An RNA of 177 nucleotides, treated with DMS and 2A3 and read out base by base.
[RMDB]
RNA sequence: GGGAACGACUCGAGUAGAGUCGAAAAAAUUACUUAAUUGCUAUAGUAUGGUGUAUAAUUGCUAUAGUAUGUAUAACACCAUUUGCAGAUUAUCCAUGAAUUAUUUUCAUAUUAUCUACCAAUAGAACCUAAUGAUACCAUUCGUGGUAUCAUUAGGAAAAGAAACAACAACAACAAC
Reactivity to DMS in 0.01 (KOAc 150mM, MgCl2 10mM, bicine 150mM(pH8.5), 24C), signal-to-noise 4, nucleotides 027 to 126: a060a070u020u010a030c040u000u010a110a110u000u000g010c000u000a020u000a020g010u000a040u000g020g020u010g010u000a090u020a100a080u010u010g010c010u010a040u000a020g010u010a030u000g010u000a050u010a060a050c060a100c020c010a080u010u000u000g020c090a050g010a020u000u000a040u010c190c150a020u000g000a020a020u010u010a150u010u000u000u000c000a010u000a090u000u000a010u000c010u000a090c100c120a020a060u010a070g000a100a150
Reactivity to 2A3 in 0.01 (KOAc 150mM, MgCl2 10mM, bicine 150mM(pH8.5), 24C), signal-to-noise 4, nucleotides 027 to 126: a010a010u200u050a060c050u100u110a080a100u290u030g000c000u020a020u010a040g020u020a050u090g100g000u070g080u090a100u130a300a200u130u040g020c010u010a020u010a030g000u030a020u060g020u010a080u010a080a020c040a040c010c010a010u050u000u130g000c000a000g020a060u030u040a010u080c070c030a010u030g010a020a020u150u140a130u130u240u050u020c000a010u030a020u110u040a010u000c010u010a040c010c030a040a040u120a130g050a090a030
It was measured as part of the RMDB library OK2TRN.